[RMDB]
RNA sequence: GGGAACGACUCGAGUAGAGUCGAAAAUGAUGAUCCUUUGGGCCUUGGGAUCGGCGUUGCAACAUACGGUGAGCGGAUACGAUAGCUUCCCUUCGUCUAGGUCCUCGCAGAAUCCCUUUUGCGCCGUGUACUGUGCGUCUUGCAGGUUUUGAUAGUCUGAACUACUGGUUUUCGAACCAGUAGUUCAAAAAGAAACAACAACAACAAC
Reactivity to DMS in 0.01 (KOAc 150mM, MgCl2 10mM, bicine 150mM(pH8.5), 24C), signal-to-noise 1, nucleotides 027 to 156: u030g010a120u010g040a050u010c020c010u000u010u020g030g000g020c020c050u000u020g030g020g000a060u000c060g020g030c040g010u000u000g010c030a080a090c030a090u000a000c130g040g010u030g010a090g060c070g040g000a120u000a090c040g000a170u030a080g000c120u000u010c010c030c020u020u010c070g030u000c050u000a120g030g000u000c010c030u020c070g000c000a100g010a170a100u000c010c010c010u000u000u000u000g030c030g020c010c020g010u000g020u000a040c060u000g000u020g030c000g000u010c090u010u000g020c010a050g010g000u010u000u010u010g060a120u000a140g030u000c120
Reactivity to 2A3 in 0.01 (KOAc 150mM, MgCl2 10mM, bicine 150mM(pH8.5), 24C), signal-to-noise 2, nucleotides 027 to 156: u200g010a050u060g000a010u030c010c000u000u060u040g010g000g000c020c000u080u060g000g000g020a020u030c050g000g010c050g040u070u120g040c060a060a050c000a110u160a030c000g040g000u090g000a020g010c060g000g020a020u040a070c030g020a060u060a100g060c050u010u050c020c000c010u030u060c090g060u060c020u030a010g030g020u000c030c000u000c040g010c020a010g030a150a130u070c000c000c000u020u060u120u130g020c040g000c010c050g020u020g030u080a090c080u070g000u020g060c010g080u020c040u010u040g000c050a030g040g050u010u010u120u080g020a020u080a070g190u230c210
The record gives the reactivity of an RNA of 207 nucleotides to DMS and 2A3. For 2A3 the reverse transcriptase was SuperScript II with manganese. Reactivities are rounded to 0.1 and cut off at 0 and 3. The reactions ran in a buffer of 150 mM KOAc, 10 mM MgCl2 and 150 mM bicine (pH 8.5), at 24 C.